Structure probing data (2A3 and DMS) for a 177-nucleotide construct. The 2A3 profile rests on 1,997 reads. Conditions: 150 mM KOAc, 10 mM MgCl2 and 150 mM bicine (pH 8.5), 24 C. Values cover nucleotides 27 to 126. For 2A3 the reverse transcriptase was SuperScript II with manganese.

[RMDB]
RNA sequence: GGGAACGACUCGAGUAGAGUCGAAAAGUCUCACGAGUGCAAAGACAAAGGUAGUUGACUCCGGCGCUACCAGUACUCGAAUGAAUGCGAAAGAGUUCACGUAUUCCAACCGGAGAAGAACUCAAAAGCAUGAUACGAGGUUCGCCUCGUAUCAUGCAAAAGAAACAACAACAACAAC
Reactivity to 2A3 in 0.01 (KOAc 150mM, MgCl2 10mM, bicine 150mM(pH8.5), 24C), signal-to-noise 3, nucleotides 027 to 126: g080u010c040u000c010a000c000g010a040g000u030g060c010a160a100a100g090a080c120a130a170a050g000g000u000a000g000u010u230g030a030c010u000c000c000g000g000c010g020c000u000a000c000c000a000g000u000a000c000u060c020g000a000a050u110g030a030a020u070g040c070g040a170a040a020g030a050g020u010u010c000a000c090g060u070a120u100u100c090c080a120a090c000c000g000g000a000g000a020a050g000a000a000c010u000c020a030a040a000a000
Reactivity to DMS in 0.01 (KOAc 150mM, MgCl2 10mM, bicine 150mM(pH8.5), 24C), signal-to-noise 1, nucleotides 027 to 126: g090u050c000u050c090a300c000g000a020g050u000g000c000a100a180a090g000a300c180a080a220a100g030g000u000a000g040u000u000g000a170c000u000c030c050g000g000c130g020c000u000a000c000c000a020g000u000a000c000u000c020g000a010a090u090g000a230a000u000g000c030g000a060a170a140g000a100g000u000u000c000a300c000g000u040a020u000u000c190c210a090a020c000c010g000g000a070g100a260a020g020a010a000c000u020c000a000a100a090a020